[RMDB]
RNA sequence: GGGAACGACUCGAGUAGAGUCGAAAAACGGCUUCUAGCCGUCGCUCGCUGGCUGAUCUAACUCUUAUACACGACGUUAGAGACUUCCUGGGAGUUGGGCGUGGACAAAAAGUACACCAGGGUUAGGAAUAGAUACAUCAUGUCGAGAUACAGGCAGCACUUUAGGUCAUUUCGAUGACCUAAAGUGAAAAGAAACAACAACAACAAC
Reactivity to 2A3 in 0.01 (KOAc 150mM, MgCl2 10mM, bicine 150mM(pH8.5), 24C), signal-to-noise 3, nucleotides 027 to 156: a000c010g050g010c020u190u090c140u300a050g000c000c000g000u000c020g010c000u020c020g060c040u020g050g030c010u000g020a030u000c010u020a030a030c010u030c020u080u070a140u100a200c180a040c110g030a030c090g020u070u050a030g010a030g010a090c010u070u010c040c020u060g010g030g010a040g000u100u080g050g010g000c040g010u030g070g000a010c040a030a120a040a020a000g080u080a040c030a020c040c040a050g040g000g010u030u080a030g050g010a080a080u040a100g070a070u090a120c030a060u090c030a030u150g070u080c040g000a010g010a060u110a100c040a020g060g000c000a010g020
Reactivity to DMS in 0.01 (KOAc 150mM, MgCl2 10mM, bicine 150mM(pH8.5), 24C), signal-to-noise 2, nucleotides 027 to 156: a080c010g020g040c000u000u000c140u000a130g020c010c020g010u000c030g000c060u000c060g000c080u000g000g000c070u010g000a130u000c000u000a030a060c040u010c050u020u010a160u000a150c140a150c110g030a060c060g010u000u020a060g020a180g000a130c070u000u000c010c030u010g000g020g030a180g060u000u000g020g020g030c040g000u000g000g000a170c060a040a060a060a120a090g000u000a100c000a030c000c050a110g010g020g020u000u000a080g010g010a100a160u010a060g010a200u000a110c070a090u000c030a120u010g010u000c000g010a140g020a150u000a100c060a060g010g000c020a140g000